This 207-nucleotide RNA was probed chemically with DMS and 2A3.

[RMDB]
RNA sequence: GGGAACGACUCGAGUAGAGUCGAAAAGCCUAUAGUCCUGGCUACUUGAGAGGCUAAGGUGGGAUGAUUGCUUGAGCCCAACAGCUGAGGUUGCAAUGAGCUAUGAACAUGCCACCGCAUUCCAGCCUAGGUGACAGAGAGAGACACUGUCUGAAAAAGUAGGUUAACUAUUCGUAGUUAACCUACUAAAAGAAACAACAACAACAAC
Reactivity to DMS in 0.01 (KOAc 150mM, MgCl2 10mM, bicine 150mM(pH8.5), 24C), signal-to-noise 4, nucleotides 027 to 156: g020c020c010u010a120u000a080g010u000c030c030u000g010g020c020u000a050c060u000u010g010a090g010a120g030g010c040u010a060a080g010g070u000g000g010g000a090u000g010a150u010u010g020c050u000u000g000a100g000c020c020c000a080a070c070a080g020c010u000g020a110g040g010u000u010g010c040a060a130u010g000a030g020c030u010a160u000g020a070a080c040a100u000g020c010c000a030c010c000g000c040a100u000u000c040c050a090g000c010c030u000a070g000g010u000g020a040c000a050g000a150g010a140g010a160g010a090c050a090c040u000g010u010c020u000g010a060a070a070a140
Reactivity to 2A3 in 0.01 (KOAc 150mM, MgCl2 10mM, bicine 150mM(pH8.5), 24C), signal-to-noise 6, nucleotides 027 to 156: g010c000c010u070a060u100a100g030u020c010c020u040g030g000c020u050a080c070u170u100g070a100g010a020g140g020c020u050a060a070g020g000u010g000g000g010a010u020g020a040u050u250g040c030u040u070g080a020g020c010c010c000a100a300c020a060g050c030u100g050a070g120g080u030u050g000c030a070a110u070g010a020g010c020u070a050u180g030a060a010c020a020u050g070c010c010a000c000c010g000c020a060u080u030c020c010a010g020c020c010u030a040g000g050u010g040a010c000a010g030a000g010a000g020a000g010a040c010a010c090u030g010u010c030u040g080a110a110a010a000
The data come from the RNA Mapping Database (RMDB), library OK3TST.